An RNA of 177 nucleotides, treated with 2A3 and DMS and read out base by base.

RNA sequence: GGGAACGACUCGAGUAGAGUCGAAAACACACCUUAUGGGUGUGUAGUGUUUGUGCUAAGGGAAAUCAUAACCUUAGGUAUGUUGUAUAAACAUAACGGCAAACUAGUUAUAGCUAAGGUGUUUCACCCAAAUACUCUUGUUCGCAAGAGUAUUUGGAAAAGAAACAACAACAACAAC
Reactivity to 2A3 in 0.01 (KOAc 150mM, MgCl2 10mM, bicine 150mM(pH8.5), 24C), signal-to-noise 3, nucleotides 027 to 126: c000a000c000a010c010c000u110u250a240u300g100g000g010u040g000u030g000u000a050g040u030g010u010u010u050g010u060g070c020u010a010a000g000g030g050a050a060a120u190c020a040u060a110a070c000c000u000u000a010g020g000u010a020u010g010u000u020g100u060a130u220a180a020a010c010a010u020a070a060c020g090g000c010a050a020a020c010u040a070g140u160u150a200u130a140g070c090u100a040a070g100g010u010g000u000u000u030c020a030c000
Reactivity to DMS in 0.01 (KOAc 150mM, MgCl2 10mM, bicine 150mM(pH8.5), 24C), signal-to-noise 4, nucleotides 027 to 126: c010a020c000a000c010c010u000u010a140u020g000g020g020u000g020u000g000u010a030g020u010g010u000u000u010g010u000g030c010u000a030a000g000g000g010a060a120a140u000c300a050u010a080a200c000c000u000u010a000g000g030u000a010u000g010u000u000g010u020a100u010a080a030a020c000a000u010a020a100c220g020g010c030a010a020a040c020u000a120g010u000u010a090u010a130g020c090u020a070a140g010g010u000g010u000u000u000c020a100c090
Notes
The reactions ran in a buffer of 150 mM KOAc, 10 mM MgCl2 and 150 mM bicine (pH 8.5), at 24 C. DMS adducts were read by reverse transcription with MarathonRT. The data come from the RNA Mapping Database (RMDB), library RFMREP. 2A3 adducts were read by reverse transcription with SuperScript II with manganese.